Chemical mapping of a 207-nucleotide RNA with 2A3 and DMS. The reactions ran in a buffer of 150 mM KOAc, 10 mM MgCl2 and 150 mM bicine (pH 8.5), at 24 C. DMS adducts were read by reverse transcription with MarathonRT. It was measured as part of the RMDB library PDB130. Values cover nucleotides 27 to 156. For DMS, 3,792 sequencing reads were counted.

[RMDB]
RNA sequence: GGGAACGACUCGAGUAGAGUCGAAAAUCGCGACGUAUCGUGAUAUGGUUUUACAUAAACGAUGCACGUUUGGCAUGGUUGUCGUCUCUAGGUAUCUUGAACCCACUAGGUAUAGUGUGGGAAAAGGUGCCUUUCUCAUUCGUUGUCGACUGGCUCCCCCUUAACAGAUGUUCGCAUCUGUUAAGGGAAAAGAAACAACAACAACAAC
Reactivity to 2A3 in 0.01 (KOAc 150mM, MgCl2 10mM, bicine 150mM(pH8.5), 24C), signal-to-noise 2, nucleotides 027 to 156: u020c020g000c030g030a070c030g010u030a020u000c010g000u000g060a160u020a040u210g040g150u180u150u160u300a040c000a000u010a000a030a000c000g010a000u020g060c060a020c050g010u060u140u190g110g070c190a120u050g030g000u000u010g000u000c000g000u000c000u000c000u030a010g020g000u030a000u030c000u030u010g090a160a140c010c000c000a010c020u030a020g180g170u170a240u040a190g110u060g050u240g040g010g000a000a070a000a000g000g000u030g030c020c020u000u030u000c010u010c000a040u100u020c020g090u070u120g170u030c020g040a140c080u090g080g110c070u080c000c000
Reactivity to DMS in 0.01 (KOAc 150mM, MgCl2 10mM, bicine 150mM(pH8.5), 24C), signal-to-noise 2, nucleotides 027 to 156: u000c020g020c020g030a070c040g040u000a040u000c000g050u000g000a200u000a020u000g010g010u000u000u010u020a050c000a020u000a060a150a020c000g000a050u010g070c100a160c020g000u000u000u010g040g040c050a100u000g050g020u000u040g010u000c000g030u000c000u000c020u010a170g010g030u000a020u000c010u010u000g000a300a300c000c000c010a010c000u000a100g000g000u000a180u000a030g020u000g030u000g000g070g000a020a120a000a010g000g040u010g000c010c010u000u000u000c010u000c030a200u010u000c060g020u000u000g010u000c010g000a170c080u000g010g000c000u010c010c020